RNA sequence: GGGAACGACUCGAGUAGAGUCGAAAAGUACACUUCGGUGUACGGAACGGGGUCCUUCGGGAGCCUAGGCUUUUGACGCUCUGAAGCCUCCACGGAGCGAUAAGCCUGCGCUUUGAUCGAAGGACGGAGGCACCCUCGAGCGGACCUUCGGGUCCAAUUAAUAUGGCUGUUUCGACAGCCAUAUUAAAAAAGAAACAACAACAACAAC
Reactivity to DMS in 0.01 (KOAc 150mM, MgCl2 10mM, bicine 150mM(pH8.5), 24C), signal-to-noise 1, nucleotides 027 to 156: g010u010a010c000a010c020u000u010c300g100g010u010g000u010a010c010g020g000a190a210c070g000g040g000g040u000c030c000u020u000c010g030g000g010a030g030c020c070u000a010g030g020c000u000u010u030u060g000a300c100g000c000u010c010u000g030a100a160g010c030c010u000c000c000a300c020g020g000a020g050c000g010a110u000a060a050g040c000c010u000g010c260g000c000u030u000u000g000a080u010c020g000a040a020g010g000a000c020g010g010a020g020g000c030a170c040c020c020u010c070g020a220g020c100g040g000a040c010c000u000u000c300g030g000g010u000c000c020a020a060
Reactivity to 2A3 in 0.01 (KOAc 150mM, MgCl2 10mM, bicine 150mM(pH8.5), 24C), signal-to-noise 2, nucleotides 027 to 156: g000u000a010c000a020c010u100u190c300g090g000u000g000u010a010c030g000g010a120a020c040g080g020g120g000u000c010c010u000u010c000g010g000g030a010g030c010c070u100a120g020g000c030u090u050u090u210g140a110c040g000c000u000c000u040g070a110a050g010c010c010u030c010c010a040c020g000g000a000g000c020g040a010u060a030a020g000c000c010u120g020c080g020c060u250u150u090g070a100u120c000g000a000a020g000g000a000c000g000g010a000g000g000c010a020c010c010c000u080c040g100a080g060c090g010g000a010c010c000u020u050c210g100g000g000u050c000c000a000a000
The data come from the RNA Mapping Database (RMDB), library RNAMAK. An RNA of 207 nucleotides, treated with DMS and 2A3 and read out base by base. The DMS profile rests on 2,114 reads. Reactivities are given for positions 27 through 156. For 2A3 the reverse transcriptase was SuperScript II with manganese.